Chemical mapping of a 170-nucleotide RNA with 2A3 and DMS. The reactions ran in a buffer of 150 mM KOAc, 10 mM MgCl2 and 150 mM bicine (pH 8.5), at 24 C. Values are in units of 0.01, from 0 to 300, in steps of 10. The 2A3 profile rests on 1,350 reads. The DMS profile rests on 1,756 reads. For 2A3 the reverse transcriptase was SuperScript II with manganese.

RNA sequence: GGGAACGACUCGAGUAGAGUCGAAAACAACUGUUAUCUUGCCACUGCAUUGUUAACACUCCAACAAAUAGAGUUGAAGUUUAAUCCACCUGCUCUACAAAGGGCUGGUGAAGCUGCUAACCUUUGUAAAACCGAACCUUCGGGUUCGGUAAAAGAAACAACAACAACAAC
Reactivity to 2A3 in 0.01 (KOAc 150mM, MgCl2 10mM, bicine 150mM(pH8.5), 24C), signal-to-noise 2, nucleotides 027 to 129: c010a000a000c080u030g010u060u110a080u170c020u000u130g140c040c020a010c060u170g050c050a070u040u100g000u020u010a000a000c080a000c130u090c000c000a100a020c000a050a130a030u300a060g180a000g110u000u000g010a060a010g000u000u000u050a050a000u000c000c000a020c000c000u030g000c030u030c000u020a020c020a060a200a000g010g000g000c000u040g040g000u000g000a000a000g090c020u070g000c040u040a030a040c000c000u000u020u000g020u070a020a080a000
Reactivity to DMS in 0.01 (KOAc 150mM, MgCl2 10mM, bicine 150mM(pH8.5), 24C), signal-to-noise 2, nucleotides 027 to 129: c030a120a060c140u000g120u000u000a000u000c060u000u020g000c010c260a160c000u060g000c060a050u300u000g020u000u000a190a080c010a000c040u040c020c070a040a000c030a010a000a300u000a240g000a200g000u080u000g050a100a170g000u030u030u070a220a010u010c050c000a060c010c010u000g010c180u000c000u010a060c300a090a070a190g010g130g010c000u000g030g110u000g020a010a010g090c170u000g000c040u000a010a120c060c020u010u000u010g040u000a040a020a190